Source: RMDB library OK3TST, as collected in RNAgym. An RNA of 207 nucleotides, treated with DMS and 2A3 and read out base by base. Reactivities are given for positions 27 through 156. The RNA was probed in 150 mM KOAc, 10 mM MgCl2 and 150 mM bicine (pH 8.5) at 24 C. For 2A3, 2,332 sequencing reads were counted.

[RMDB]
RNA sequence: GGGAACGACUCGAGUAGAGUCGAAAAUUCGGUCCUGUGGAGCGGACCGUUUGCUCCGUCAGGAUGUGGAGGUAUCGCGCCCUCCUGUGCGCGUAUGUACAUCGAUACGGUUAUGUCGCCUUUGUGUCGGCGUUUGACACUUACACAUACCGGAUAAGCCAUUUUAUAGGUUCGCCUAUAAAAUGGCAAAAGAAACAACAACAACAAC
Reactivity to DMS in 0.01 (KOAc 150mM, MgCl2 10mM, bicine 150mM(pH8.5), 24C), signal-to-noise 1, nucleotides 027 to 156: u000u010c050g020g000u000c000c020u020g040u000g020g000a070g010c050g030g000a150c090c190g040u000u010u010g020c010u010c010c020g020u000c040a040g020g010a040u010g030u000g000g000a060g010g000u010a040u010c030g010c020g010c030c010c020u010c040c020u000g010u000g020c050g020c010g010u000a030u000g050u000a070c070a000u010c110g010a200u000a040c050g030g020u000u010a040u000g000u000c060g000c040c050u000u020u010g000u000g000u010c020g020g030c150g030u000u000u020g010a020c020a000c010u000u000a060c040a030c020a060u000a060c010c000g000g000a060u010a100a290
Reactivity to 2A3 in 0.01 (KOAc 150mM, MgCl2 10mM, bicine 150mM(pH8.5), 24C), signal-to-noise 3, nucleotides 027 to 156: u020u020c000g000g000u010c000c010u060g020u060g060g040a030g000c040g040g080a060c030c010g040u040u050u070g010c030u010c010c020g120u080c060a020g040g020a050u040g050u070g040g060a030g030g010u030a010u140c000g000c000g010c010c010c010u100c000c040u050g020u090g020c030g000c030g010u050a040u100g050u020a020c030a110u060c100g060a080u050a160c030g030g000u120u080a010u040g150u160c050g060c010c040u050u090u080g110u030g000u060c020g020g050c120g030u040u060u100g010a010c010a010c000u010u030a010c020a000c000a020u050a090c000c000g000g060a030u040a100a020